[RMDB]
RNA sequence: GGGAACGACUCGAGUAGAGUCGAAAAGGGCAUCGAGGGGAUGUCCGCACAGCGGGUCAACCUCGGUCUCGCCGAGCAGACCAGCGGUCUGGCCAGCGACCCCGGCGCGACCCCCGAGGUCGGCGGCUAUUAUAGUCCCGUUCGCGGGACUAUAAUAAAAAGAAACAACAACAACAAC
Reactivity to 2A3 in 0.01 (KOAc 150mM, MgCl2 10mM, bicine 150mM(pH8.5), 24C), signal-to-noise 2, nucleotides 027 to 126: g000g030g010c040a020u020c050g050a090g010g070g020g030a020u050g040u010c030c010g010c030a170c010a030g030c030g000g000g000u030c010a010a020c010c000u010c010g010g030u010c020u000c020g020c040c060g010a040g000c070a000g010a010c000c010a060g160c080g080g030u070c060u020g090g050c000c000a040g010c040g000a020c000c040c030c030g000g010c050g020c000g040a050c000c000c110c160c110g010a040g000g000u040c010g060g300c010g040g000c040
Reactivity to DMS in 0.01 (KOAc 150mM, MgCl2 10mM, bicine 150mM(pH8.5), 24C), signal-to-noise 4, nucleotides 027 to 126: g020g000g020c070a020u000c020g010a100g010g020g010g010a060u000g010u010c010c000g020c120a100c160a120g020c030g020g000g000u000c000a100a140c150c000u000c010g010g000u000c080u000c070g020c040c070g000a110g010c080a090g000a020c010c010a140g020c180g010g010u010c080u000g000g000c030c010a090g010c020g000a090c060c010c020c030g000g000c030g030c050g000a090c040c010c050c130c110g010a100g020g000u000c010g010g010c060g010g010c100
The data come from the RNA Mapping Database (RMDB), library OK2TST. Chemical mapping of a 177-nucleotide RNA with 2A3 and DMS. The DMS profile rests on 4,542 reads. The RNA was probed in 150 mM KOAc, 10 mM MgCl2 and 150 mM bicine (pH 8.5) at 24 C.